[RMDB]
RNA sequence: GGGAACGACUCGAGUAGAGUCGAAAAAGCCACCGUUACGGCGGUGGCAAGUAGAAAAGUUGGUGCUUAGACCACGCCCUCUACCGUAAUAAUAGAUAAAUAGGCGAGUAUCAGUACGCUGAUACAAAAAACACUCACACGUUCGCGUGUGAGUGAAGUACGGUACACCGUUCGCGGUGUACCGUACAAAAGAAACAACAACAACAAC
Reactivity to 2A3 in 0.01 (KOAc 150mM, MgCl2 10mM, bicine 150mM(pH8.5), 24C), signal-to-noise 2, nucleotides 027 to 156: a000g040c000c000a010c000c030g010u010u000a090c190g130g000c020g010g010u000g000g010c000a000a010g040u010a000g010a030a060a030a040g020u070u090g020g020u110g070c120u170u090a050g020a060c000c000a000c010g000c000c000c000u090c010u000a040c030c050g050u030a060a040u110a170a030u100a150g110a150u140a140a170a000u090a050g040g010c040g060a050g050u010a000u020c000a000g020u060a050c300g020c110u000g000a010u000a000c000a000a220a000a000a000a000c010a000c000u020c000a010c000a000c010g140u190u180c220g050c010g240u000g000u000g020a020g000u000g000a030a000